RNA sequence: GGGAACGACUCGAGUAGAGUCGAAAAUGGGAACAGUGUGCUUCACCGUCCUGCUGGACGAUGGCCGAACAACCACCCGAACCGUGCGGCUGCCCGGGAACCGGUCAGACAUUAGGGAGCGCUCGACACAUCUUCCGCAUUUCGAUGCGGAAGAUGUAAAAGAAACAACAACAACAAC
Reactivity to 2A3 in 0.01 (KOAc 150mM, MgCl2 10mM, bicine 150mM(pH8.5), 24C), signal-to-noise 2, nucleotides 027 to 126: u080g030g010g060a040a080c040a140g100u070g000u040g140c030u080u080c030a030c130c010g000u010c000c030u150g300c130u180g000g010a000c030g020a040u020g020g000c000c000g000a040a020c060a020a050c000c040a060c000c030c020g010a010a030c040c020g000u040g000c040g110g040c080u110g000c060c000c000g020g020g060a030a080c040c000g000g020u000c000a010g030a070c050a090u000u190a060g000g000g040a000g000c060g000c010u030c030g090a030c010
Reactivity to DMS in 0.01 (KOAc 150mM, MgCl2 10mM, bicine 150mM(pH8.5), 24C), signal-to-noise 2, nucleotides 027 to 126: u010g000g000g020a110a030c170a110g010u010g030u010g020c040u000u000c030a050c080c020g000u010c010c010u020g050c190u010g040g030a030c030g000a080u000g000g000c020c050g000a080a110c210a020a140c070c040a090c060c010c010g020a060a100c130c050g000u000g000c100g010g010c040u000g000c030c030c030g000g010g020a130a070c130c020g030g000u000c090a030g000a040c100a100u010u000a070g000g000g000a090g020c040g010c040u010c040g000a130c150
An RNA of 177 nucleotides, treated with 2A3 and DMS and read out base by base. The data come from the RNA Mapping Database (RMDB), library OK2TST.